The record gives the reactivity of an RNA of 177 nucleotides to DMS. The reactions ran in a buffer of 150 mM KOAc, 10 mM MgCl2 and 150 mM bicine (pH 8.5), at 24 C.
RNA sequence: GGGAACGACUCGAGUAGAGUCGAAAAGCAGCCCUUUUUGGGGUUUGUUGUCCAUAUAGUUUAAGAUGGAAACAUAUUACAAGAUAUUUACUCUUGUUAGGUGAAAGUUGAUGGUCGCCGAGCCAGUUGGGAUGUGAUAUUUCGAUAUCACAUCCCAAAAAGAAACAACAACAACAAC
Reactivity to DMS in 0.01 (KOAc 150mM, MgCl2 10mM, bicine 150mM(pH8.5), 24C), signal-to-noise 2, nucleotides 027 to 126: g020c060a090g040c020c020c000u000u000u010u020u000g010g000g050g010u010u000u000g000u000u000g000u010c000c000a030u010a070u010a150g020u020u000u040a090a140g020a030u000g010g000a190a070a080c000a090u050a060u030u010a000c000a000a000g000a050u000a080u030u000u020a170c100u010c000u000u000g000u000u000a090g030g050u000g000a070a120a150g000u000u010g000a140u020g010g000u000c050g000c070c050g000a170g030c030c070a080g010u000